[RMDB]
RNA sequence: GGGAACGACUCGAGUAGAGUCGAAAAUGGUGUUAAGUGGAAUAAGUGGAAAAAUAUACAUAUAUGUACAGGGGGCUACAUAUAUGUAUAUGCCCCCUAUUUUCAGUAUAAGUAGGUAUAAGGUGGAGAUACCGUACGAGUUCGCUCGUACGGUAUCAAAAGAAACAACAACAACAAC
Reactivity to 2A3 in 0.01 (KOAc 150mM, MgCl2 10mM, bicine 150mM(pH8.5), 24C), signal-to-noise 1, nucleotides 027 to 126: u140g000g000u080g000u120u040a090a040g030u070g010g090a030a030u120a140a000g070u160g040g020a030a070a090a090a000u000a000u000a000c000a000u020a000u010a000u040g000u010a020c200a150g110g000g040g100g000c020u000a000c010a000u010a000u020a020u060g030u040a000u000a000u020g000c060c000c000c000c000u000a020u000u000u000u010c050a040g010u050a040u010a260a000g030u080a020g120g000u130a120u000a220a000g040g000u050g020g070a150
Reactivity to DMS in 0.01 (KOAc 150mM, MgCl2 10mM, bicine 150mM(pH8.5), 24C), signal-to-noise 2, nucleotides 027 to 126: u020g000g020u000g000u000u000a030a130g030u010g000g010a020a050u010a090a160g000u000g000g000a000a050a070a060a040u000a000u000a030c000a020u000a020u020a020u030g000u000a020c170a150g020g080g020g060g030c200u000a000c020a000u000a000u000a020u010g000u000a020u000a000u000g020c090c020c000c010c000u000a000u000u000u040u050c120a100g040u000a070u030a050a120g000u040a010g010g030u000a060u010a040a040g010g010u050g000g000a140
Description: Conditions: 150 mM KOAc, 10 mM MgCl2 and 150 mM bicine (pH 8.5), 24 C. An RNA of 177 nucleotides, treated with 2A3 and DMS and read out base by base. The 2A3 profile rests on 597 reads. For 2A3 the reverse transcriptase was SuperScript II with manganese.